[RMDB]
RNA sequence: GGGAACGACUCGAGUAGAGUCGAAAAGAAUAACGAUACGCGCCGCACGGCUAAUGGCCGACCGCAAGAGACGAUUAACGUCAAUCUGCGCGCAUAAGCAGAAUUUGCGGAAUUUUACGUUUUGGAAGCAUAGAAUAUAGUUCGCUAUAUUCUAUGCAAAAGAAACAACAACAACAAC
Reactivity to 2A3 in 0.01 (KOAc 150mM, MgCl2 10mM, bicine 150mM(pH8.5), 24C), signal-to-noise 7, nucleotides 027 to 126: g050a040a100u190a090a040c070g030a050u080a120c060g010c010g000c040c010g060c020a050c020g000g000c030u090a170a070u140g070g000c010c020g040a080c010c000g000c010a010a010g060a010g000a080c030g030a050u190u270a210a090c020g010u010c000a010a100u000c010u010g000c020g000c010g000c050a070u060a250a030g000c010a010g010a080a080u040u010u040g000c000g020g040a010a010u110u120u110u190a080c050g010u010u010u020u030g030g010a060a020
Reactivity to DMS in 0.01 (KOAc 150mM, MgCl2 10mM, bicine 150mM(pH8.5), 24C), signal-to-noise 5, nucleotides 027 to 126: g020a130a060u020a060a090c080g010a100u010a060c090g010c090g020c040c050g030c110a140c050g010g000c030u000a080a100u020g000g040c000c000g020a210c030c010g000c010a040a020g000a150g020a010c000g010a280u000u000a090a130c040g010u000c010a130a150u000c010u000g000c020g000c220g020c160a140u010a040a090g010c010a030g010a040a190u000u000u010g010c010g000g010a130a060u010u010u010u010a090c140g020u010u000u000u000g000g010a220a120

The record gives the reactivity of an RNA of 177 nucleotides to 2A3 and DMS. The 2A3 profile rests on 11,376 reads. For DMS the reverse transcriptase was MarathonRT. For DMS, 5,230 sequencing reads were counted. Values cover nucleotides 27 to 126. The reactions ran in a buffer of 150 mM KOAc, 10 mM MgCl2 and 150 mM bicine (pH 8.5), at 24 C. The data come from the RNA Mapping Database (RMDB), library RFMREP.